RNA sequence: GGGAACGACUCGAGUAGAGUCGAAAAGUCUCCCGAUUCGUCGGGAGACCGAGAAAUUCAGGUGAUUUGGUACCUUUAAGUGCAGCUAGAAAUUCAAAGGAAACACCAUGGCGUUCGCGCCAUGGAAUACUUAAUUAGAUUUCGAUCUAAUUAAGUAAAAAGAAACAACAACAACAAC
Reactivity to DMS in 0.01 (KOAc 150mM, MgCl2 10mM, bicine 150mM(pH8.5), 24C), signal-to-noise 5, nucleotides 027 to 126: g010u000c000u000c000c000c000g010a020u000u010c160g020u000c000g010g010g000a010g010a000c000c010g010a110g000a180a080a130u000u000c070a060g020g010u010g000a110u000u000u010g010g020u000a030c030c040u000u000u010a060a050g010u000g000c050a040g000c040u000a110g000a030a040a060u000u000c030a030a030a050g000g000a070a040a070c110a090c000c010a010u000g000g010c000g030u000u010c200g020c010g030c000c010a010u000g000g010a070a050
Reactivity to 2A3 in 0.01 (KOAc 150mM, MgCl2 10mM, bicine 150mM(pH8.5), 24C), signal-to-noise 4, nucleotides 027 to 126: g000u000c000u000c000c000c000g000a010u020u040c140g010u000c010g030g010g000a010g000a000c000c000g010a010g080a040a140a020u170u100c060a010g000g050u050g070a130u050u080u110g040g030u050a030c010c000u040u110u110a120a040g030u060g070c020a010g030c030u080a030g080a050a090a050u110u040c030a050a040a010g070g020a080a070a010c040a020c030c000a000u010g000g000c020g000u020u060c240g000c010g000c060c000a000u030g000g010a010a010

Chemical mapping of a 177-nucleotide RNA with DMS and 2A3. The RNA was probed in 150 mM KOAc, 10 mM MgCl2 and 150 mM bicine (pH 8.5) at 24 C. 2A3 adducts were read by reverse transcription with SuperScript II with manganese.